[RMDB]
Notes:
Source: RMDB library TTRDEL, as collected in RNAgym. The record gives the reactivity of an RNA of 177 nucleotides to 2A3 and DMS. DMS adducts were read by reverse transcription with MarathonRT. For DMS, 1,326 sequencing reads were counted.
RNA sequence: GGGAACGACUCGAGUAGAGUCGAAAAGAUAUGGAUCGUACGAGCGAUAAGAAUGUGGUCGGAAACGACCAAUUCUUUUGACGCUUUGAAAUCCUAAGUCAAACGCUGUAGCUUCGGCUACAGCGAAGUAUGUCAAUCCGUUCGCGGAUUGACAUACAAAAGAAACAACAACAACAAC
Reactivity to 2A3 in 0.01 (KOAc 150mM, MgCl2 10mM, bicine 150mM(pH8.5), 24C), signal-to-noise 1, nucleotides 027 to 126: g040a000u040a010u080g020g000a040u070c050g030u130a050c080g020a000g030c000g030a090u030a190a010g020a000a000u300g050u040g300g010u000c010g040g000a020a000a070c010g000a000c010c030a000a010u000u000c010u000u050u010u120g190a040c030g000c000u040u000u000g040a050a000a000u010c010c010u020a150a010g040u070c030a120a000a030c030g040c000u000g010u040a000g000c000u080u040c300g170g000c000u000a000c000a000g020c000g000a000a000
Reactivity to DMS in 0.01 (KOAc 150mM, MgCl2 10mM, bicine 150mM(pH8.5), 24C), signal-to-noise 2, nucleotides 027 to 126: g010a020u000a300u030g010g010a000u020c030g000u000a230c300g000a010g040c000g020a140u000a000a000g020a000a000u000g110u000g010g000u000c000g010g000a110a120a140c030g000a030c000c000a030a000u000u000c000u000u000u000u000g010a170c050g020c000u000u000u010g000a110a100a010u000c000c010u000a080a190g010u000c030a110a070a230c000g020c000u000g000u050a000g000c000u020u000c290g030g000c000u000a000c000a010g000c000g000a000a090
As a SHAPE reagent, 2A3 marks flexible, mostly unpaired nucleotides at the ribose 2'-OH.